Structure probing data (2A3 and DMS) for a 177-nucleotide construct. Source: RMDB libraries RFM100 and RFMREP, as collected in RNAgym.

[RMDB]
RNA sequence: GGGAACGACUCGAGUAGAGUCGAAAAAAUUUACCUGUGUUUGAAUGCCUGCUCUAUGAUAGACAUGUGAAAUGAGUGCCAUUUUCAGUCUCACUAUUGAGCACAUUUUGACCUCUAAGAAACUUUCCGAUAAGAUAAGGUUCGCCUUAUCUUAUCGAAAAGAAACAACAACAACAAC
Reactivity to 2A3 in 0.01 (KOAc 150mM, MgCl2 10mM, bicine 150mM(pH8.5), 24C), signal-to-noise 9, nucleotides 027 to 126: a000a000u210u150u080a160c030c020u070g010u030g010u080u010u030g030a020a010u010g020c060c080u030g020c020u000c010u030a060u040g080a060u090a060g020a020c140a230u050g090u050g060a020a020a020u070g020a080g130u170g190c040c010a010u010u010u010u030c000a000g000u000c000u010c010a030c020u070a050u060u110g010a000g000c010a000c000a010u010u010u010u040g020a010c010c030u040c060u120a130a040g050a050a090a020c000u010u010u000c010
Reactivity to DMS in 0.01 (KOAc 150mM, MgCl2 10mM, bicine 150mM(pH8.5), 24C), signal-to-noise 7, nucleotides 027 to 126: a090a080u010u020u020a100c080c010u000g010u020g010u000u000u010g000a020a020u010g000c100c160u000g010c010u000c020u000a040u010g010a090u010a020g000a030c010a070u010g030u020g000a020a030a010u000g010a300g020u020g020c150c010a020u000u000u000u010c030a050g000u000c010u010c170a070c100u000a070u010u000g000a020g010c010a050c020a030u000u000u010u010g010a020c010c060u000c110u010a060a060g000a100a060a080c030u000u000u000c010
2A3 adducts were read by reverse transcription with SuperScript II with manganese. DMS adducts were read by reverse transcription with MarathonRT. Conditions: 150 mM KOAc, 10 mM MgCl2 and 150 mM bicine (pH 8.5), 24 C.